[RMDB]
RNA sequence: GGGAACGACUCGAGUAGAGUCGAAAAAAAAGAUAUGGACGAUCCUACCCACCUCCAAGGAAUCGUUUGACGUAGUUCGGAAACGAACUACCGAGAUUCCUGGGAGAGGGAUCGUCCUAAGUCAAAAGACAACUAAGAAGUUCGCUUCUUAGUUGUCAAAAGAAACAACAACAACAAC
Reactivity to DMS in 0.01 (KOAc 150mM, MgCl2 10mM, bicine 150mM(pH8.5), 24C), signal-to-noise 3, nucleotides 027 to 126: a120a040a080a120g000a150u010a180u000g000g000a000c010g000a000u000c010c000u000a260c020c010c020a300c120c000u010c000c000a090a010g010g000a010a000u000c000g000u000u000u000g020a200c300g020u000a000g000u000u010c000g020g000a070a140a150c010g010a010a000c000u000a000c000c020g020a070g000a010u010u000c000c000u010g000g010g000a000g000a100g000g000g000a000u000c010g010u000c000c010u000a000a100g000u000c100a090a090a200a140
Reactivity to 2A3 in 0.01 (KOAc 150mM, MgCl2 10mM, bicine 150mM(pH8.5), 24C), signal-to-noise 1, nucleotides 027 to 126: a000a000a050a010g210a090u300a170u250g000g000a000c000g000a000u000c000c010u060a300c050c000c020a010c000c000u030c000c000a030a010g050g020a010a010u010c030g120u080u180u290g040a040c040g000u020a000g000u000u020c010g040g030a040a090a080c010g000a010a000c020u020a000c000c000g000a000g000a010u000u010c010c010u000g030g000g050a010g040a000g050g000g000a000u030c000g000u020c000c000u000a000a000g050u040c000a010a000a020a070